This 207-nucleotide RNA was probed chemically with 2A3. The 2A3 profile rests on 2,076 reads.
RNA sequence: GGGAACGACUCGAGUAGAGUCGAAAAAGCCAUACCAUUACGAUGGUAUGGCAAGUCCGUGACGGCGAUGGAUCCCGCCAGGCCGAUGCCGAACUGCCGAUCUGGCUGAUGGUUCCUGCCCCGUCAAAAAACGUAAAGCACUUCGGUGCUUUACGAAGCACUACUACUACUUCGGUAGUAGUAGUGCAAAAGAAACAACAACAACAAC
Reactivity to 2A3 in 0.01 (KOAc 150mM, MgCl2 10mM, bicine 150mM(pH8.5), 24C), signal-to-noise 2, nucleotides 027 to 156: a000g000c000c000a000u000a000c000c000a000u040u020a030c300g080a010u000g000g000u050a000u000g000g000c000a000a010g040u000c010c010g010u050g020a000c010g010g070c100g010a020u050g000g000a010u030c020c020c010g000c010c010a000g000g000c020c010g040a070u150g050c040c060g210a270a170c160u180g020c030c000g010a030u010c000u000g000g000c070u110g030a240u160g040g000u020u010c000c000u040g030c010c000c000c000g000u000c000a110a000a020a100a000a000c000g000u000a000a000a000g000c010a000c010u000u110c170g120g010u010g000c000u000u000u000a000c000g000a040a000

The reactions ran in a buffer of 150 mM KOAc, 10 mM MgCl2 and 150 mM bicine (pH 8.5), at 24 C.
The data come from the RNA Mapping Database (RMDB), library M2RFPK.
For 2A3 the reverse transcriptase was SuperScript II with manganese.